[RMDB]
This 177-nucleotide RNA was probed chemically with DMS and 2A3. The 2A3 profile rests on 683 reads. For DMS the reverse transcriptase was MarathonRT. The reactions ran in a buffer of 150 mM KOAc, 10 mM MgCl2 and 150 mM bicine (pH 8.5), at 24 C.

RNA sequence: GGGAACGACUCGAGUAGAGUCGAAAAUUUGUGAGGGGGAAGCGUUUCGUUAUGUGCGGAUACAUUAACUUGAAGGUUAGAUCAUAGUGGUGUGGUUCGCCUUUUGGUUGUGUUAAAACCUUGCGAGCUAUAUUAAUAUUUUCGAAUAUUAAUAUAGAAAAGAAACAACAACAACAAC
Reactivity to DMS in 0.01 (KOAc 150mM, MgCl2 10mM, bicine 150mM(pH8.5), 24C), signal-to-noise 2, nucleotides 027 to 126: u000u020u010g010u000g010a050g010g010g000g020g040a090a100g000c110g020u010u030u010c040g010u010u030a030u010g010u030g010c060g010g010a100u040a040c030a060u010u010a030a030c050u000u000g010a040a020g010g010u000u010a090g000a050u010c090a050u010a060g000u010g010g010u010g010u000g000g000u000u000c010g000c000c000u000u000u000u000g000g000u000u000g010u000g000u000u010a040a070a130a070c020c010u000u010g000c040g000a080g020
Reactivity to 2A3 in 0.01 (KOAc 150mM, MgCl2 10mM, bicine 150mM(pH8.5), 24C), signal-to-noise 2, nucleotides 027 to 126: u120u090u120g020u050g020a050g020g020g000g000g030a000a030g020c030g020u030u120u150c060g020u140u300a130u140g090u080g020c000g050g000a010u020a050c020a010u110u080a050a050c000u000u030g030a040a000g050g010u060u120a070g010a010u040c000a000u020a050g120u130g140g090u120g020u010g020g000u000u020c000g000c000c000u010u010u010u010g000g000u010u000g000u000g000u030u010a000a110a030a030c000c000u010u080g030c040g020a020g000